[RMDB]
RNA sequence: GGGAACGACUCGAGUAGAGUCGAAAACCCACCUUUCGAGGUGGGAAGCGACCUUUGUGUAGCGAGGGGGAGAUAUUAGAGCUCCCAUUGGGAGCUAUUCUAUCUUUGAUCCUACCCACCGCUACACUCUGGUAUUUACGCGCGAUUCGUCGCGCAACUUUCCGAAUUCUUUCGAGAAUUCGGAAAGAAAAGAAACAACAACAACAAC
Reactivity to 2A3 in 0.01 (KOAc 150mM, MgCl2 10mM, bicine 150mM(pH8.5), 24C), signal-to-noise 2, nucleotides 027 to 156: c010c000c000a010c000c020u130u110u100c300g120a020g000g000u020g000g010g030a030a010g180c090g080a030c000c000u000u000u010g010u000g000u000a000g000c020g010a090g020g030g000g020g010a030g020a020u050a020u020u020a050g020a010g010c000u000c000c000c080a190u200u180g010g000g000a000g000c040u000a010u040u000c010u000a010u010c000u080u090u210g110a200u210c010c030u090a300c050c000c010a090c090c000g000c000u000a000c000a010c000u010c000u010g000g020u030a110u030u250u130a120c100g000c000g000c000g000a020u020u080c210g020u030c010g080c000g000c000a000a040